This 177-nucleotide RNA was probed chemically with DMS. For DMS, 1,112 sequencing reads were counted.
RNA sequence: GGGAACGACUCGAGUAGAGUCGAAAAAGGGGAAAUGGUUUAUAAGACCGGCAGGAAGUCUCUCAAAGGUCGUAUCGACGCCUAUUCUUUCGGUUUUUGUUCCGAUGGUCUGAUUCCUGUGGAGCUAGCCUGCUUACACAUUCGUGUGUAAGCAGGCAAAAGAAACAACAACAACAAC
Reactivity to DMS in 0.01 (KOAc 150mM, MgCl2 10mM, bicine 150mM(pH8.5), 24C), signal-to-noise 1, nucleotides 027 to 126: a130g000g000g000g000a040a080a070u010g000g000u000u000u000a140u030a130a060g000a040c020c020g010g030c100a060g000g020a060a050g010u000c020u000c050u000c080a060a140a050g010g000u010c040g030u010a140u000c080g010a060c030g030c030c020u000a070u000u000c060u000u040u000c050g020g000u000u000u000u030u030g010u010u000c030c010g000a080u000g010g010u000c080u020g020a080u000u010c000c020u000g010u000g000g010a120g010c040u010a130